[RMDB]
RNA sequence: GGGAACGACUCGAGUAGAGUCGAAAAUGUGGCAGGCACCGCGUGAGGCUGGCUUCACAGAGCAGCGACAACUGCCCGCUUCCAACGGUGGAAGGAUAACGGGCCGCUGCACUCCUAGGCCGCUUGGGCCUCGUAGCCUACUCCAGCGACCACCAUCGCAUUCAUUACUCUUCGGAGUAAUGAAUGCAAAAGAAACAACAACAACAAC
Reactivity to 2A3 in 0.01 (KOAc 150mM, MgCl2 10mM, bicine 150mM(pH8.5), 24C), signal-to-noise 2, nucleotides 027 to 156: u130g000u030g010g030c100a060g040g030c080a010c060c010g020c050g070u120g010a010g220g160c050u020g020g000c010u050u020c020a040c010a050g010a020g010c030a000g020c000g050a040c060a300a130c090u090g000c000c000c000g030c000u010u000c000c070a160a140c180g210g090u150g060g000a010a000g000g010a080u040a150a040c020g010g010g000c010c010g000c000u000g000c010a030c030u000c000c020u030a000g000g000c060c000g030c230u180u170g020g030g010c030c010u040c030g000u030a000g000c000c000u020a010c030u070c010c000a020g000c010g080a150c000c000a030c020c000a070u110c120
Source information: Structure probing data (2A3) for a 207-nucleotide construct. Values cover nucleotides 27 to 156. For 2A3, 1,193 sequencing reads were counted. 2A3 adducts were read by reverse transcription with SuperScript II with manganese.